Chemical mapping of a 177-nucleotide RNA with 2A3 and DMS. 2A3 adducts were read by reverse transcription with SuperScript II with manganese. DMS adducts were read by reverse transcription with MarathonRT. For DMS, 2,875 sequencing reads were counted. The RNA was probed in 150 mM KOAc, 10 mM MgCl2 and 150 mM bicine (pH 8.5) at 24 C.

[RMDB]
RNA sequence: GGGAACGACUCGAGUAGAGUCGAAAACUCAUGCGUACCCUCCACUGGGGCACGAUGCGCGUGACGAAAAAAGGCCUCUCUCUGUACCUAGGGAGGAGCUUCUCGUAGAGAAUCUGACGGGCCUGGCCUACCUUGCCUCAUUCGUGAGGCAAGGUAGAAAAGAAACAACAACAACAAC
Reactivity to 2A3 in 0.01 (KOAc 150mM, MgCl2 10mM, bicine 150mM(pH8.5), 24C), signal-to-noise 3, nucleotides 027 to 126: c000u010c000a000u040g000c010g030u080a160c030c010c010u030c070c070a210c240u180g000g020g030g020c110a070c130g120a090u130g020c000g000c010g000u020g010a030c090g090a040a000a000a000a050a000g020g000c020c000u000c000u000c010u000c010u030g080u170a280c020c060u060a040g000g000g000a000g010g000a000g010c000u030u000c020u000c000g180u230a030g010a010g010a030a050u010c040u030g060a040c080g020g000g010c000c020u010g020g050c000
Reactivity to DMS in 0.01 (KOAc 150mM, MgCl2 10mM, bicine 150mM(pH8.5), 24C), signal-to-noise 3, nucleotides 027 to 126: c200u000c000a020u000g000c000g020u000a080c020c050c020u010c120c190a140c210u010g000g000g000g060c300a040c160g000a130u000g000c020g000c010g040u010g000a040c140g030a000a010a050a070a120a050g000g000c000c010u000c020u000c000u000c010u000g000u010a160c220c140u000a030g000g000g000a010g020g010a040g010c100u000u010c000u010c000g000u000a090g000a060g000a010a020u010c010u000g000a110c160g000g010g010c020c000u000g010g010c190